[RMDB]
Source: RMDB libraries RFM100 and RFMREP, as collected in RNAgym. Structure probing data (DMS and 2A3) for a 177-nucleotide construct.
RNA sequence: GGGAACGACUCGAGUAGAGUCGAAAAUCUGUCCACCUCCUUUAUCAAUAGAACAAUUUCUCUCUUUUAUUUUCCCUGUCAUAUAUGCAUAUUUACAUAUUUAUAUGGAGGUGGGCAUACUGCCAACGAAUUACGUAUCAUUCGUGAUACGUAAUUCAAAAGAAACAACAACAACAAC
Reactivity to DMS in 0.01 (KOAc 150mM, MgCl2 10mM, bicine 150mM(pH8.5), 24C), signal-to-noise 6, nucleotides 027 to 126: u020c070u010g010u000c010c000a010c000c000u000c000c000u000u010u020a040u000c130a060a080u010a070g010a120a120c140a060a090u010u000u000c030u000c010u000c010u000u000u000u000a090u010u030u000u000c010c000c010u010g010u020c100a060u010a070u010a050u010g000c040a070u020a080u010u020u010a130c040a060u000a010u000u000u000a050u010a050u020g000g010a020g000g030u000g010g020g000c000a000u010a020c120u000g010c020c030a100a120c190
Reactivity to 2A3 in 0.01 (KOAc 150mM, MgCl2 10mM, bicine 150mM(pH8.5), 24C), signal-to-noise 9, nucleotides 027 to 126: u030c010u010g000u000c000c000a000c010c000u020c000c010u090u220u070a050u050c060a040a040u030a070g100a070a070c050a140a140u030u150u010c040u000c000u010c010u040u050u050u070a180u080u090u050u030c010c000c000u030g090u140c100a020u090a020u030a030u230g040c020a020u050a080u190u120u070a070c020a020u060a020u030u060u040a070u020a030u040g000g000a000g000g000u000g000g000g000c000a000u020a000c010u050g070c010c000a060a030c090

Overview
2A3 is a SHAPE reagent: it acylates the 2'-hydroxyl of flexible nucleotides of all four kinds. For DMS the reverse transcriptase was MarathonRT.